[RMDB]
This 177-nucleotide RNA was probed chemically with 2A3 and DMS. Source: RMDB library TTRDEL, as collected in RNAgym. The 2A3 profile rests on 1,806 reads.
RNA sequence: GGGAACGACUCGAGUAGAGUCGAAAAGAUAUGGAUUAUGGCCGUGCACAACUAUUCGGAAACGAACGAAUUGUGAACUACACGACCAUAAUCCUAAGUCAAACUUGAUUAGUUCGCUAAUCAAGAACACCGUACUCAUCUUCGGAUGAGUACGGUGAAAAGAAACAACAACAACAAC
Reactivity to 2A3 in 0.01 (KOAc 150mM, MgCl2 10mM, bicine 150mM(pH8.5), 24C), signal-to-noise 1, nucleotides 027 to 126: g000a010u050a050u180g010g010a010u000u000a000u010g000g060c010c000g000u040g000c020a020c000a040a050c100u100a080u050u020c020g010g000a140a090a070c040g030a090a000c030g070a170a300u020u000g000u000g040a070a050c010u210a070c230a000c010g010a010c010c020a000u000a000a000u050c000c000u000a010a000g000u000c000a030a000a200c010u000u000g020a010u000u000a000g030u040u050c190g000c160u000a020a000u010c010a010a000g040a020a020
Reactivity to DMS in 0.01 (KOAc 150mM, MgCl2 10mM, bicine 150mM(pH8.5), 24C), signal-to-noise 1, nucleotides 027 to 126: g010a040u000a300u000g000g000a010u000u000a000u000g010g010c000c000g000u050g000c010a000c000a100a010c060u010a290u000u000c010g000g000a100a050a150c150g010a010a040c060g010a050a060u000u010g000u000g000a020a040c150u010a150c010a010c000g010a000c000c000a010u000a000a000u000c000c000u000a000a120g010u000c040a100a070a120c000u000u000g000a040u000u000a020g000u000u000c300g010c000u010a000a000u000c000a010a020g000a080a140
The RNA was probed in 150 mM KOAc, 10 mM MgCl2 and 150 mM bicine (pH 8.5) at 24 C. For DMS, 849 sequencing reads were counted.